[RMDB]
RNA sequence: GGGAACGACUCGAGUAGAGUCGAAAACAGAGUGCCCUGACAAUGGAAUAGGAGGGCCAUAUUAUCAGGGGUGACCUCUAAUUUGCAAUUAAAAUGACUUCUGGGCAUGUAAAUGGACAACUGGGUGGGAGGAUUGUGUAAUGUGGGUGGCACUCAAUCCUUUUAAUGCAUUCGUGCAUUAAAAGGAAAAAGAAACAACAACAACAAC
Reactivity to 2A3 in 0.01 (KOAc 150mM, MgCl2 10mM, bicine 150mM(pH8.5), 24C), signal-to-noise 1, nucleotides 027 to 156: c070a010g040a000g050u010g000c000c000c000u050g020a000c040a040a160u180g020g020a050a060u060a050g090g000a000g000g000g000c000c000a080u110a110u140u090a080u010c030a010g110g000g080g000u040g070a050c000c000u000c030u040a090a090u050u080u100g010c020a000a010u130u000a070a130a110a110u170g000a060c020u120u000c040u100g000g000g000c010a000u000g030u030a020a080a090u070g040g020a000c060a020a080c080u080g000g040g120u230g020g020g030a100g010g000a020u000u240g070u040g010u120a060a080u150g000u130g060g000g000u010g000g000c000a000c000u000c030a000a010
Chemical mapping of a 207-nucleotide RNA with 2A3. It was measured as part of the RMDB library OK3TST. Values cover nucleotides 27 to 156. 2A3 adducts were read by reverse transcription with SuperScript II with manganese.